[RMDB]
RNA sequence: GGGAACGACUCGAGUAGAGUCGAAAAAGUGUAUGAAGUACGUAGAGUGUCGGCAAGCUCUAUAUAUGGACACUUACGAAGGGUUUUGGUUGCUUUGUAUCUCAAGCCGACUUUGAGUAUUUGAGGAAAAAGACUUACGCCUUCGGGCGUAAGUCAACAUCUAAAAGGGGUUCGCCCCUUUUAGAUGAAAAGAAACAACAACAACAAC
Reactivity to 2A3 in 0.01 (KOAc 150mM, MgCl2 10mM, bicine 150mM(pH8.5), 24C), signal-to-noise 2, nucleotides 027 to 156: a000g080u070g000u030a200u150g030a060a020g050u050a010c030g000u000a010g030a000g070u040g010u060c030g020g000c060a100a120g000c000u010c020u010a040u000a020u000a010u070g050g020a000c010a000c030u030u080a040c060g080a050a060g120g020g000u050u010u150u170g030g030u040u010g000c030u060u080u060g070u020a060u070c030u000c040a000a030g000c000c000g020a020c020u130u110u000g010a030g030u060a140u060u070u080g050a020g050g070a040a090a040a000a000g000a000c000u000u000a000c020g030c000c000u080u090c120g040g010g010c000g000u000a010a000g000u000c000a000a000
Reactivity to DMS in 0.01 (KOAc 150mM, MgCl2 10mM, bicine 150mM(pH8.5), 24C), signal-to-noise 2, nucleotides 027 to 156: a040g030u010g020u000a160u000g010a150a190g030u010a030c010g050u000a010g000a070g050u000g020u000c020g000g020c050a120a300g010c000u000c030u000a040u020a040u000a030u020g010g010a070c020a030c020u000u010a120c090g010a130a070g000g020g020u000u000u000u000g030g030u010u000g000c010u000u010u030g010u000a100u000c020u000c010a040a130g020c010c030g020a070c060u000u000u000g000a110g030u000a060u000u000u000g020a110g010g010a050a090a090a110a150g000a060c010u000u000a010c000g020c000c000u000u000c300g050g000g040c000g010u000a000a000g010u000c000a020a090